[RMDB]
RNA sequence: GGGAACGACUCGAGUAGAGUCGAAAACGCCUAUCCGCCCAAUCUGUACGUCGUCGACGGCGGCGCGCCGCAAGUCAACGCGGCCAGUGCGGUAAUCGACGAACUCGGUGUUACCGACGUCGCGGUGCAGUCAUCAUAGAUUCGUCUAUGAUGACUGAAAAGAAACAACAACAACAAC
Reactivity to DMS in 0.01 (KOAc 150mM, MgCl2 10mM, bicine 150mM(pH8.5), 24C), signal-to-noise 9, nucleotides 027 to 126: c170g010c020c030u010a080u010c030c030g020c100c060c080a090a140u000c050u000g010u010a060c060g010u000c020g010u000c030g010a050c080g000g020c020g010g010c100g030c250g020c010c010g010c040a080a120g020u010c140a080a080c090g010c010g000g000c050c060a030g010u000g010c140g000g000u000a070a100u010c040g000a030c020g010a110a110c110u000c020g010g010u000g010u010u000a060c010c000g010a070c060g010u000c070g010c030g010g000u000g010
Reactivity to 2A3 in 0.01 (KOAc 150mM, MgCl2 10mM, bicine 150mM(pH8.5), 24C), signal-to-noise 5, nucleotides 027 to 126: c050g050c010c010u050a150u030c010c010g020c010c030c010a030a060u050c030u060g080u080a040c030g040u030c010g020u020c040g120a040c040g030g010c000g030g000c030g010c050g020c010c000g010c030a140a070g110u100c040a070a030c060g000c000g010g000c000c020a040g010u060g040c000g030g010u030a030a090u050c020g010a020c020g010a090a090c030u010c030g020g000u070g070u150u090a060c010c000g010a030c020g020u030c010g000c020g020g030u060g030
The record gives the reactivity of an RNA of 177 nucleotides to DMS and 2A3.
The RNA was probed in 150 mM KOAc, 10 mM MgCl2 and 150 mM bicine (pH 8.5) at 24 C.